[RMDB]
Source: RMDB library M2RFPK, as collected in RNAgym. Chemical mapping of a 207-nucleotide RNA with 2A3.
RNA sequence: GGGAACGACUCGAGUAGAGUCGAAAAAGCGUAGCGGUACGCCGCUACGCAAGGCGCAUUUGAACUCUAUUGUACGCCUUGCAUAAAGCAAAAGUACUAAAAAAACGUGCCGUUACGACGGCACGAAAAAACAUCCAUUGGUUCGCCAAUGGAUGAAUCAAUAGCAACCCUUCGGGGUUGCUAUUGAAAAAGAAACAACAACAACAAC
Reactivity to 2A3 in 0.01 (KOAc 150mM, MgCl2 10mM, bicine 150mM(pH8.5), 24C), signal-to-noise 1, nucleotides 027 to 156: a000g040c000g000u000a000g000c030g000g040u040a040c240g040c020c010g010c030u000a000c010g020c010a000a000g000g000c000g040c050a080u050u070u220g110a120a070c110u020c050u300a090u040u120g030u080a020c020g000c000c000u000u000g000c030a080u090a150a130a000g000c020a010a050a040a010g050u050a180c080u120a070a090a000a020a020a000a000c010g000u000g000c000c000g000u010u010a040c300g010a030c000g000g000c000a000c000g000a000a010a000a000a000a000c000a000u000c020c000a000u000u000g000g040u000u050c110g040c150c000a000a000u000g000g000a000u000g020a000a010